[RMDB]
RNA sequence: GGGAACGACUCGAGUAGAGUCGAAAACAAAGGCUGGAGCAGGACUUCCUCCUAGGGAACAUCCUCAGAUAUGUAGAUGUCACCGUGUGGGCUCAGACAUCCAGGGUGGACCAGAGCCGGUGGCUUAGGCUUUACUCAAGUUCGCUUGAGUAAAGCCAAAAGAAACAACAACAACAAC
Reactivity to 2A3 in 0.01 (KOAc 150mM, MgCl2 10mM, bicine 150mM(pH8.5), 24C), signal-to-noise 1, nucleotides 027 to 126: c020a000a070a010g140g060c070u090g040g050a040g000c020a020g020g040a010c000u030u000c000c000u040c030c020u100a100g000g040g030a040a040c000a030u020c000c000u050c070a030g050a140u160a030u270g110u080a050g030a130u090g010u000c000a000c050c040g000u020g100u110g150g040g030c000u000c020a000g060a030c010a020u100c070c050a040g190g020g100u090g000g050a030c020c060a020g010a010g030c000c030g020g000u000g050g000c000u040u030a010
Reactivity to DMS in 0.01 (KOAc 150mM, MgCl2 10mM, bicine 150mM(pH8.5), 24C), signal-to-noise 2, nucleotides 027 to 126: c070a100a120a120g030g020c040u000g020g010a070g000c100a050g010g000a100c180u000u000c020c010u010c070c090u000a120g000g000g000a080a070c070a070u000c010c020u000c080a080g000a100u010a050u010g020u000a090g010a060u020g010u000c030a030c000c030g010u000g020u000g020g010g020c130u010c030a050g000a050c100a100u010c010c030a070g010g000g000u000g000g000a090c050c060a140g000a070g000c000c030g020g030u000g020g030c070u010u000a130